[RMDB]
RNA sequence: GGGAACGACUCGAGUAGAGUCGAAAAAUCAGACUGGUCGGACGGACGCCUGUCAAUUGGCAGCCUGACGACGAGAUCCCAAUAAAUUGACUACACACGUAGAAGCUUAAGUAUACGAUGCCUUCGGACGUGGGUUCGACUCCCACCGUCUCCAUACGGUAAUAUAGUGGUUCGCCACUAUAUUACCAAAAGAAACAACAACAACAAC
Reactivity to DMS in 0.01 (KOAc 150mM, MgCl2 10mM, bicine 150mM(pH8.5), 24C), signal-to-noise 2, nucleotides 027 to 156: a090u010c050a080g000a110c030u000g010g000u000c030g000g000a240c050g030g040a040c030g030c030c000u000g030u000c150a080a200u000u000g010g020c010a060g000c010c010u000g020a170c040g020a040c040g000a090g000a110u000c030c000c000a110a120u000a020a080a110u000u030g000a140c000u010a060c050a020c000a050c060g020u010a070g000a070a090g030c000u010u000a080a130g010u010a150u010a070c030g010a180u000g010c060c050u000u000c050g030g010a050c000g010u010g000g000g040u000u000c090g020a290c150u000c000c000c000a030c040c010g000u000c020u000c010c010a070u000a140c140
Reactivity to 2A3 in 0.01 (KOAc 150mM, MgCl2 10mM, bicine 150mM(pH8.5), 24C), signal-to-noise 3, nucleotides 027 to 156: a000u060c040a020g070a120c050u220g010g000u040c020g000g000a020c000g000g000a080c010g020c000c000u020g010u070c010a030a080u090u010g010g000c010a000g050c000c000u000g010a020c000g000a000c000g010a010g000a030u060c000c020c000a000a000u040a000a010a020u040u010g010a020c000u030a030c100a000c000a000c090g030u030a020g000a040a000g020c010u090u140a080a010g030u040a100u010a090c020g050a070u040g020c000c020u050u110c050g020g020a000c000g000u000g000g000g000u040u040c020g020a010c040u010c030c000c010a050c030c020g010u010c010u020c010c000a070u130a120c120
Structure probing data (DMS and 2A3) for a 207-nucleotide construct.
Reactivities are given for positions 27 through 156.
For 2A3 the reverse transcriptase was SuperScript II with manganese.
It was measured as part of the RMDB library ARCHII.
For 2A3, 2,465 sequencing reads were counted.